[RMDB]
RNA sequence: GGGAACGACUCGAGUAGAGUCGAAAAAUGGAAUAUGUACGCACUGCAACGAACACGAAAUGUGCAAAGCAUCAAUUUCUGCUCGUAGUGUACGUACGUGCAUACGAGUCUUGAAUGCGUGAAUUGACUGUACGACUAUGUUCGCAUAGUCGUACAGAAAAGAAACAACAACAACAAC
Reactivity to DMS in 0.01 (KOAc 150mM, MgCl2 10mM, bicine 150mM(pH8.5), 24C), signal-to-noise 4, nucleotides 027 to 126: a080u020g010g000a110a060u010a030u010g000u000a060c180g000c020a020c060u000g010c160a130a100c120g010a030a110c140a040c110g000a050a030a090u010g000u010g000c020a080a120a100g000c040a030u030c090a090a060u000u000u010c010u000g000c000u000c000g020u000a060g020u020g010u010a000c040g010u030a080c140g010u000g020c000a000u000a000c000g010a030g010u010c090u060u000g020a050a000u010g000c190g040u030g010a130a120u010u000g000a290
Reactivity to 2A3 in 0.01 (KOAc 150mM, MgCl2 10mM, bicine 150mM(pH8.5), 24C), signal-to-noise 8, nucleotides 027 to 126: a000u170g020g030a070a050u100a030u120g010u030a000c050g010c010a010c000u040g030c020a070a090c060g070a090a030c090a010c120g080a100a060a040u160g000u000g000c020a060a030a040g030c010a010u050c050a050a130u010u010u040c020u030g000c000u000c000g020u010a060g260u010g000u050a000c060g050u100a050c150g000u000g010c000a000u000a010c010g010a010g050u040c060u080u150g070a100a030u130g030c050g020u080g040a050a070u060u100g040a040
The data come from the RNA Mapping Database (RMDB), library OK1LIB. The record gives the reactivity of an RNA of 177 nucleotides to DMS and 2A3. The reactions ran in a buffer of 150 mM KOAc, 10 mM MgCl2 and 150 mM bicine (pH 8.5), at 24 C. The DMS profile rests on 6,168 reads.